[RMDB]
The record gives the reactivity of an RNA of 177 nucleotides to 2A3 and DMS. Source: RMDB library OK2TST, as collected in RNAgym. The 2A3 profile rests on 3,038 reads. Conditions: 150 mM KOAc, 10 mM MgCl2 and 150 mM bicine (pH 8.5), 24 C.
RNA sequence: GGGAACGACUCGAGUAGAGUCGAAAACGUGCAACGAACAGGCCCGGCACCGCGAACGUCUGGGCGUAUGUCACCGUCUGCCGGAUCUCGGAGAGUGAGCCGAGAUGCAACAGCAUCCACCUCACCACUUAUCAGUCGGUUUCGACCGACUGAUAAGAAAAGAAACAACAACAACAAC
Reactivity to 2A3 in 0.01 (KOAc 150mM, MgCl2 10mM, bicine 150mM(pH8.5), 24C), signal-to-noise 1, nucleotides 027 to 126: c020g070u120g030c010a050a030c020g060a020a020c020a030g020g050c030c040c000g040g000c080a040c000c040g120c070g180a230a050c040g010u020c030u130g000g020g010c000g050u150a060u090g040u040c020a020c100c000g020u040c100u010g020c010c010g030g040a050u000c030u000c020g050g080a110g010a020g040u060g020a010g050c030c030g120a110g000a040u010g000c060a240a270c000a100g010c000a020u010c020c010a040c000c010u010c000a010c030c010a050
Reactivity to DMS in 0.01 (KOAc 150mM, MgCl2 10mM, bicine 150mM(pH8.5), 24C), signal-to-noise 3, nucleotides 027 to 126: c070g020u020g020c040a060a030c030g020a080a020c080a050g020g010c000c020c000g030g000c220a060c080c060g000c180g000a080a120c210g030u000c000u000g040g010g000c020g020u010a060u010g010u010c050a080c080c020g010u000c110u000g020c040c040g000g000a060u000c010u000c000g010g010a100g000a140g050u010g000a030g010c060c050g000a100g020a010u000g010c020a130a060c210a140g000c030a020u010c010c050a140c220c010u000c000a020c050c030a240